[RMDB]
RNA sequence: GGGAACGACUCGAGUAGAGUCGAAAACGCUUAUCCUAAAGGUGUCAGACGUGAGGCGGAGCCUCGUUAAAAAUCCUAUCUGACAAGCGUUUAGUUCGGAUGAGCCGCGCCAUCGUUAAAAACGCGGAAACAGAGCUGGGUUCGCCCAGCUCUGUUUAAAAGAAACAACAACAACAAC
Reactivity to 2A3 in 0.01 (KOAc 150mM, MgCl2 10mM, bicine 150mM(pH8.5), 24C), signal-to-noise 1, nucleotides 027 to 126: c000g000c000u050u130a130u250c000c070u160a060a060a180g060g000u010g020u010c000a000g000a040c000g190u130g020a010g070g000c130g040g030a070g000c000c000u070c080g100u040u000a000a000a000a000a000u000c010c070u030a060u000c000u020g050a000c000a000a000g000c000g000u000u000u110a140g030u040u020c010g120g000a000u000g020a040g080c000c000g000c030g010c140c000a010u000c030g040u140u030a000a000a000a000a000c020g000c010g050g000
Structure probing data (2A3) for a 177-nucleotide construct. Reactivities are rounded to 0.1 and cut off at 0 and 3. The RNA was probed in 150 mM KOAc, 10 mM MgCl2 and 150 mM bicine (pH 8.5) at 24 C.